[RMDB]
Structure probing data (DMS and 2A3) for a 177-nucleotide construct. DMS adducts were read by reverse transcription with MarathonRT. The data come from the RNA Mapping Database (RMDB), libraries RFM100 and RFMREP. The RNA was probed in 150 mM KOAc, 10 mM MgCl2 and 150 mM bicine (pH 8.5) at 24 C.
RNA sequence: GGGAACGACUCGAGUAGAGUCGAAAAUUUACUGUUAAAAAUUGGCGUAGCUGACACAUGGCUUUGUCACAUGUACCUCAUGGCAAUGUACAAAGACCAGUUCUUAACGGUAGAAAUGGAUGAAUUUAAUUUUAUGAUGUUUCGACAUCAUAAAAUUAAAAGAAACAACAACAACAAC
Reactivity to DMS in 0.01 (KOAc 150mM, MgCl2 10mM, bicine 150mM(pH8.5), 24C), signal-to-noise 5, nucleotides 027 to 126: u020u000u010a000c010u000g000u000u000a000a010a020a030a020u010u000g000g010c080g020u030a090g030c070u010g020a140c240a080c190a130u020g020g000c040u000u010u010g000u010c100a020c050a060u010g000u020a170c070c070u020c180a090u020g020g020c120a150a020u000g000u000a030c040a020a060a040g000a110c000c000a020g000u000u000c040u000u000a000a000c010g000g010u010a000g000a020a100a110u010g010g020a110u010g010a140a080u000u000u000
Reactivity to 2A3 in 0.01 (KOAc 150mM, MgCl2 10mM, bicine 150mM(pH8.5), 24C), signal-to-noise 8, nucleotides 027 to 126: u040u030u010a010c000u000g010u010u010a010a020a000a010a030u030u020g040g020c050g110u110a050g030c120u090g130a050c020a010c010a220u160g040g000c000u040u040u050g040u030c040a010c000a100u050g050u130a100c020c030u160c080a060u100g030g000c030a050a100u060g020u050a060c020a040a100a000g050a090c000c000a000g000u010u000c000u010u000a010a000c000g020g000u010a010g060a020a090a040u120g090g040a070u080g060a080a150u030u010u010